[RMDB]
An RNA of 207 nucleotides, treated with 2A3 and read out base by base. Values are in units of 0.01, from 0 to 300, in steps of 10. For 2A3 the reverse transcriptase was SuperScript II with manganese. For 2A3, 298 sequencing reads were counted.

RNA sequence: GGGAACGACUCGAGUAGAGUCGAAAAUUCGAUGCGAGAGAACUAUUCUGACUGAUGCAUGUCUAUUUAAGCACCCAAUUCUUCUGUGAACUACUAUACGCGGAGGAGGAUGUCAAUCACUCCCAACUGUUCUCUCAGAAGGUAGCAGGCGCGAUUCUCCACCAUUACCCUUCGGGGUAAUGGUGGAAAAAGAAACAACAACAACAAC
Reactivity to 2A3 in 0.01 (KOAc 150mM, MgCl2 10mM, bicine 150mM(pH8.5), 24C), signal-to-noise 1, nucleotides 027 to 156: u130u140c110g060a020u020g080c060g040a070g000a000g000a050a000c000u030a160u250u000c020u020g000a020c000u010g100a230u140g010c020a020u070g020u230c070u070a250u020u140u110a060a000g000c030a030c060c040c000a000a010u000u050c030u010u000c000u060g050u060g080a250a000c000u090a000c000u170a140u000a300c130g020c080g070g000a100g000g000a010g030g030a020u090g170u200c160a140a100u050c080a100c160u120c020c020c020a000a000c100u070g000u060u000c000u000c000u000c000a000g000a070a000g000g050u050a000g020c100a090g000g100c090g010c010g080a000u140u050c050